[RMDB]
RNA sequence: GGGAACGACUCGAGUAGAGUCGAAAAAGUUUCUCGAUAAUUGAUCUGUACAAUCUGUCAAGCAAAACCCCAAAACCUUACACUGAGAGCAUUUAGCCUGAUUACUCUUUAAAUCAAAUCAGGCAAUUCAAGGUCGCAGUCUUCGGACUGCGACCAACGAUAGACCUAUGUUCGCAUAGGUCUAUCGAAAAGAAACAACAACAACAAC
Reactivity to 2A3 in 0.01 (KOAc 150mM, MgCl2 10mM, bicine 150mM(pH8.5), 24C), signal-to-noise 3, nucleotides 027 to 156: a000g040u030u060u050c040u030c030g040a090u100a180a070u100u080g030a050u080c080u200g090u130a080c040a070a050u000c030u070g050u070c020a030a010g020c040a030a070a070a160c020c010c020c020a010a090a060a200c090c060u110u130a080c090a060c120u140g060a010g000a000g010c010a010u000u020u040a030g000c000c000u000g000a010u000u020a010c000u000c040u150u300u060a010a000a000u190c090a010a000a000u000c000a000g000g000c000a000a000u040u030c020a020a050g010g010u000c000g000c010a000g000u000c000u000u050c070g120g020a000c010u010g000c000g000a000c000c000a000a000
Conditions: 150 mM KOAc, 10 mM MgCl2 and 150 mM bicine (pH 8.5), 24 C. This 207-nucleotide RNA was probed chemically with 2A3. 2A3 is a SHAPE reagent: it acylates the 2'-hydroxyl of flexible nucleotides of all four kinds.